[RMDB]
RNA sequence: GGGAACGACUCGAGUAGAGUCGAAAAACCCUGGUGGCAGGCCUUUAGCCAGGGUGCGGUGGCUAACUGGAUGGGGCACGUCUCAUUUAUAAAGAAUUUUGAGGCACUUGGCGUGGAUGCAAGAAGGAUCCAUCCAUUAAUUCGUUAAUGGAUGGAUAAAAGAAACAACAACAACAAC
Reactivity to DMS in 0.01 (KOAc 150mM, MgCl2 10mM, bicine 150mM(pH8.5), 24C), signal-to-noise 9, nucleotides 027 to 126: a060c010c000c010u000g010g020u000g000g020c080a060g010g010c040c030u010u010u010a170g010c020c010a040g010g010g010u000g020c070g020g020u000g010g010c050u000a070a100c090u010g000g000a100u000g010g000g010g000c080a060c110g010u000c010u000c020a030u000u000u000a100u010a100a090a140g010a080a090u000u000u000u000g010a050g010g000c020a130c090u000u000g010g010c050g020u000g010g010a080u000g000c070a060a090g010a090a100g000g010
Reactivity to 2A3 in 0.01 (KOAc 150mM, MgCl2 10mM, bicine 150mM(pH8.5), 24C), signal-to-noise 5, nucleotides 027 to 126: a000c010c000c010u000g040g020u040g030g070c080a030g060g030c020c000u040u110u160a020g000c000c010a020g020g010g000u020g020c050g040g060u070g010g010c030u020a060a020c030u060g030g020a050u050g020g000g030g000c020a020c030g050u010c000u020c010a050u040u150u110a250u090a100a170a060g090a080a070u060u110u090u120g020a030g010g030c020a010c070u050u060g030g000c030g020u030g020g020a030u040g040c030a050a020g050a030a030g130g010
An RNA of 177 nucleotides, treated with DMS and 2A3 and read out base by base. The RNA was probed in 150 mM KOAc, 10 mM MgCl2 and 150 mM bicine (pH 8.5) at 24 C. Reactivities are given for positions 27 through 126. For DMS, 17,308 sequencing reads were counted. DMS adducts were read by reverse transcription with MarathonRT. Reactivities are rounded to 0.1 and cut off at 0 and 3.